This 177-nucleotide RNA was probed chemically with DMS.
Reactivities are given for positions 27 through 126.
It was measured as part of the RMDB library M2PK50.
For DMS, 1,571 sequencing reads were counted.
The reactions ran in a buffer of 150 mM KOAc, 10 mM MgCl2 and 150 mM bicine (pH 8.5), at 24 C.
RNA sequence: GGGAACGACUCGAGUAGAGUCGAAAACAAGGCGGAUUCGUCCGCCUUGGGUGCGUAGCUGCGUAAUUUUAAUAGCUACGCUUAAUAAAUUAAAAUUACGCAAUGUGGGGGCUUUCGAGCCCCCAAAUCAUUAUAACAGCUUCGGCUGUUAUAAUGAAAAAGAAACAACAACAACAAC
Reactivity to DMS in 0.01 (KOAc 150mM, MgCl2 10mM, bicine 150mM(pH8.5), 24C), signal-to-noise 1, nucleotides 027 to 126: c010a020a000g020g020c000g000g010a010u000u020c230g010u010c010c010g000c000c000u010u000g000g000g020u000g000c030g010u010a000g010c020u000g010c020g010u010a010a010u000u010u010u010a040a160u020a100g000c010u000a000c010g020c020u020u000a040a050u020a030a040a080u000u000a030a000a030a040u000u000a010c010g020c020a150a110u020g030u000g040g000g000g000g010c020u010u000u020c130g010a030g000c010c000c000c000c000a000a010a040